[RMDB]
RNA sequence: GGGAACGACUCGAGUAGAGUCGAAAAGAUAUGGAUCAGUACAGCUUUUGACGCCAUGUCGGAAACGACAUGUGCGAUAAGCUGACUGAUCCUAAGUCAAAGCGCGAUACCUUCGGGUAUCGCGCAAGCUACUCGUGUGGUUCGCCACACGAGUAGCAAAAGAAACAACAACAACAAC
Reactivity to 2A3 in 0.01 (KOAc 150mM, MgCl2 10mM, bicine 150mM(pH8.5), 24C), signal-to-noise 1, nucleotides 027 to 126: g010a000u010a010u060g000g000a000u050c000a010g000u300a300c010a010g090c010u120u250u300u300g150a020c000g000c030c010a000u000g010u000c010g000g000a060a060a020c010g000a010c000a000u080g020u100g020c010g010a020u070a140a020g000c000u000g000a000c000u020g000a000u020c000c000u010a000a000g000u000c050a160a060a020g010c020g030c000g020a000u020a000c000c000u080u080c300g210g030g000u000a010u000c000g040c000g000c000a000a000